Chemical mapping of a 207-nucleotide RNA with 2A3 and DMS. For 2A3, 1,199 sequencing reads were counted. The data come from the RNA Mapping Database (RMDB), library OK3TST. The DMS profile rests on 2,078 reads. Values cover nucleotides 27 to 156. For DMS the reverse transcriptase was MarathonRT.

[RMDB]
RNA sequence: GGGAACGACUCGAGUAGAGUCGAAAAACAUGUGUAUUAAUAAUUCGUGAUCGGCGAGUAUUUCUUGCUUAAAGCAUGCGUAAUAAUUUGCAGUAUCUAUCGCAUCCCAUGUGGUAUAUCGCGCGAUUUUGUCGACACUGCGCAACAUCUUGUAUAGAGUAUGCAAAACGUUCGCGUUUUGCAUACUAAAAGAAACAACAACAACAAC
Reactivity to 2A3 in 0.01 (KOAc 150mM, MgCl2 10mM, bicine 150mM(pH8.5), 24C), signal-to-noise 3, nucleotides 027 to 156: a000c070a070u080g020u040g060u070a010u190u130a140a150u120a110a170u170u130c050g020u050g060a160u070c010g040g000c000g010a000g070u030a060u090u120u050c070u030u080g000c010u080u120a190a030a050g000c010a010u040g000c040g080u030a060a040u080a050a050u090u040u230g010c030a020g030u060a020u040c040u030a020u070c010g020c010a020u060c010c000c000a020u060g070u130g020g010u030a070u010a020u130c070g000c000g000c020g100a040u040u030u020u220g090u040c000g010a020c000a010c050u060g030c040g000c050a000a030c000a100u040c030u120u040g030u000a060u000a120g040
Reactivity to DMS in 0.01 (KOAc 150mM, MgCl2 10mM, bicine 150mM(pH8.5), 24C), signal-to-noise 1, nucleotides 027 to 156: a060c060a060u020g020u030g010u000a120u000u020a130a100u010a050a170u000u000c050g050u000g010a110u000c070g010g060c010g020a040g050u000a070u000u000u000c040u010u030g000c060u010u030a050a090a210g020c020a040u000g020c030g020u010a080a090u020a040a110u010u000u020g020c010a150g000u030a030u000c030u000a120u010c030g000c030a170u010c040c010c020a100u010g010u000g030g040u000a060u000a020u010c120g000c080g040c010g000a070u000u000u000u000g060u000c090g010a100c040a050c060u000g020c000g010c100a030a040c080a070u000c000u000u000g020u010a200u000a120g010